[RMDB]
RNA sequence: GGGAACGACUCGAGUAGAGUCGAAAAUUAUUGAUCGACGAUGUACUGAUUGAAUGGGAAAAUCCAUCCGGAUGGCUUAUAGGAUUCGAUUUUGAUGUAUACUCUGUUUUAACUAGUAGAGGCGGUAUCACCGAGGCGACCUUGUACUUUGAAAAUGAGUAUCCGUACUAUUCGUAGUACGGAUACUAAAAGAAACAACAACAACAAC
Reactivity to 2A3 in 0.01 (KOAc 150mM, MgCl2 10mM, bicine 150mM(pH8.5), 24C), signal-to-noise 3, nucleotides 027 to 156: u130u080a070u050u100g010a020u070c020g010a010c070g030a040u070g050u080a050c060u060g070a140u130u030g060a090a030u090g000g020g060a040a100a020a090u060c000c000a040u000c070c040g030g040a030u020g030g020c060u090u120a070u130a170g000g020a040u050u030c040g030a050u010u050u040u160g060a060u050g030u080a010u010a020c010u000c000u000g100u030u020u000u080a080a050c050u010a010g090u020a010g030a030g090g000c030g020g010u050a010u060c020a010c050c000g010a020g000g000c030g020a060c000c030u010u050g020u070a020c000u040u110u120g050a060a040a040a060u140g010
Reactivity to DMS in 0.01 (KOAc 150mM, MgCl2 10mM, bicine 150mM(pH8.5), 24C), signal-to-noise 2, nucleotides 027 to 156: u000u010a100u010u010g030a090u000c030g000a120c020g010a080u000g020u000a090c070u020g000a160u000u000g000a060a030u000g010g020g000a080a080a050a090u000c000c000a030u000c000c040g000g000a090u010g010g030c090u000u010a070u010a130g000g000a120u010u000c040g000a140u000u000u000u010g010a080u000g010u010a120u000a060c050u000c040u000g020u000u000u020u000a070a110c050u010a060g020u000a080g010a060g020g010c020g020g000u000a050u000c030a100c010c050g010a080g010g000c030g030a050c020c020u010u010g010u010a090c070u000u020u000g010a030a090a040a120u000g000